[RMDB]
RNA sequence: GGGAACGACUCGAGUAGAGUCGAAAAGCUGGUCUUCGGACCAGCAAAAAGGGGUCGUUCUUGAGGAGUUGACAUGCUCUGAAGCCUCCACGGAGCAACAGCAACUCUACCCACCAAGACGACGGAGGCACCCAAAAAACGCCGCUUCGGCGGCGAAGUAAUACUUUUUCUUCGGAAAAAGUAUUACAAAAGAAACAACAACAACAAC
Reactivity to 2A3 in 0.01 (KOAc 150mM, MgCl2 10mM, bicine 150mM(pH8.5), 24C), signal-to-noise 1, nucleotides 027 to 156: g020c000u000g010g000u000c000u080u050c280g000g020a010c000c010a000g000c020a000a020a000a000a020g070g000g020g000u020c030g000u150u050c010u020u030g000a120g000g000a020g010u010u030g000a100c050a090u060g020c000u030c000u000g050a070a050g000c000c000u000c010c000a000c020g000g010a000g000c000a020a080c030a150g180c000a030a030c010u000c020u060a080c030c000c010a020c000c030a020a020g050a050c100g000a010c030g020g000a000g010g050c000a060c010c010c010a020a150a010a030a000a030c000g140c120c000g000c000u030u020c150g050g000c000g000g000c010g000a020a000

This 207-nucleotide RNA was probed chemically with 2A3. Values cover nucleotides 27 to 156. The reactions ran in a buffer of 150 mM KOAc, 10 mM MgCl2 and 150 mM bicine (pH 8.5), at 24 C. The data come from the RNA Mapping Database (RMDB), library RNAMAK. For 2A3 the reverse transcriptase was SuperScript II with manganese.